An RNA of 177 nucleotides, treated with 2A3 and DMS and read out base by base.
Reactivities are given for positions 27 through 126.
DMS adducts were read by reverse transcription with MarathonRT.
2A3 adducts were read by reverse transcription with SuperScript II with manganese.
RNA sequence: GGGAACGACUCGAGUAGAGUCGAAAAACAGAGCGAAGGGGGGACGGAGAAGGCUAUCUUGGCCGGGCGACGGUUGUCCCGGUUUAAGCGUGUAGGCUGGUUUUCCAGGCAAAUCCGGAAAAAGAAAGACUAUAAGAAGUUUCGACUUCUUAUAGUCAAAAGAAACAACAACAACAAC
Reactivity to 2A3 in 0.01 (KOAc 150mM, MgCl2 10mM, bicine 150mM(pH8.5), 24C), signal-to-noise 1, nucleotides 027 to 126: a000c010a000g020a020g020c020g050a050a050g010g000g000g000g030g000a000c010g010g020a030g000a070a000g030g000c010u010a040u030c030u070u030g020g000c040c000g010g000g020c070g040a130c090g130g040u130u160g050u160c010c020c010g050g000u000u000u080a030a010g000c040g040u050g060u040a030g040g120c040u030g000g000u030u000u050u090c030c010a020g000g040c020a120a040a020u070c050c020g000g030a050a090a030a030a000g070a040a120a010
Reactivity to DMS in 0.01 (KOAc 150mM, MgCl2 10mM, bicine 150mM(pH8.5), 24C), signal-to-noise 4, nucleotides 027 to 126: a110c040a080g000a020g010c060g010a060a060g010g010g000g000g000g020a060c070g000g000a080g000a070a070g000g010c050u000a070u000c020u000u000g000g000c000c010g010g000g010c300g000a070c200g000g000u010u000g010u000c010c000c000g000g000u010u000u010a020a030g020c300g020u010g000u020a040g000g000c020u000g000g010u010u020u000u000c020c010a090g010g010c070a040a060a090u000c030c020g010g020a030a050a060a080a060g000a130a070a160